Structure probing data (DMS and 2A3) for a 177-nucleotide construct.
Source: RMDB library OK1LIB, as collected in RNAgym.
The 2A3 profile rests on 17,912 reads.
The RNA was probed in 150 mM KOAc, 10 mM MgCl2 and 150 mM bicine (pH 8.5) at 24 C.
DMS (dimethyl sulfate) methylates the pairing face of unpaired adenines and cytosines.
For DMS the reverse transcriptase was MarathonRT.
The DMS profile rests on 34,698 reads.

RNA sequence: GGGAACGACUCGAGUAGAGUCGAAAAGAAAAAGAGGCAGAGCCUUUGCUCUCAUACGCCCCAUUGUAUCGGGUGGAUUGCUCUGUUAUACACUGUGGGCAGGUUACUUAGGAUGUCCUCAGAGAAAAUGAUAAUAUAGCUUCGGCUAUAUUAUCAUAAAAGAAACAACAACAACAAC
Reactivity to DMS in 0.01 (KOAc 150mM, MgCl2 10mM, bicine 150mM(pH8.5), 24C), signal-to-noise 9, nucleotides 027 to 126: g010a090a080a060a110a080g000a060g010g020c030a050g000a090g010c010c090u010u010u010g010c100u010c020u000c050a100u030a100c100g010c040c020c010c060a080u020u010g000u000a040u010c160g000g000g010u000g010g010a110u040u030g000c000u000c010u030g030u010u030a060u010a070c090a090c060u000g010u020g000g000g010c010a050g000g010u020u020a050c080u010u030a060g010g010a110u010g000u020c010c000u000c010a060g000a150g000a080a060a090
Reactivity to 2A3 in 0.01 (KOAc 150mM, MgCl2 10mM, bicine 150mM(pH8.5), 24C), signal-to-noise 9, nucleotides 027 to 126: g110a010a100a020a000a010g070a030g030g010c030a010g010a060g080c000c030u030u030u060g050c020u020c000u010c020a040u070a120c060g040c000c020c000c020a060u060u130g040u040a050u060c040g000g020g000u050g080g160a210u080u240g000c000u000c010u020g020u050u020a030u010a030c060a000c010u010g020u170g020g000g010c020a030g030g080u100u080a070c020u070u100a070g100g040a080u050g030u030c000c010u020c020a020g030a000g030a060a130a010